[RMDB]
RNA sequence: GGGAACGACUCGAGUAGAGUCGAAAAGAUAUGGAUUCGGGUAGGGAGCUUGGACAUCGGAAACGAUGUAGAGAGCGAAGAACUACCACGAAUCCUAAGUCAAAAGGACCCUCUUCGGAGGGUCCAAGUAAUGGAGUGUGUUCGCACACUCCAUUACAAAAGAAACAACAACAACAAC
Reactivity to DMS in 0.01 (KOAc 150mM, MgCl2 10mM, bicine 150mM(pH8.5), 24C), signal-to-noise 3, nucleotides 027 to 126: g000a030u000a110u020g000g000a020u000u010c000g000g000g000u000a010g010g000g030a070g030c000u000u000g020g000a030c010a010u000c000g000g010a040a020a070c000g010a020u000g000u010a030g010a270g020a010g010c000g000a130a170g020a120a070c000u000a010c000c000a110c020g000a010a010u010c000c000u000a000a080g000u000c010a090a070a150a180g000g000a010c000c000c000u000c010u000u010c240g030g000a020g020g000g010u000c000c000a000a040
Conditions: 150 mM KOAc, 10 mM MgCl2 and 150 mM bicine (pH 8.5), 24 C. Structure probing data (DMS) for a 177-nucleotide construct.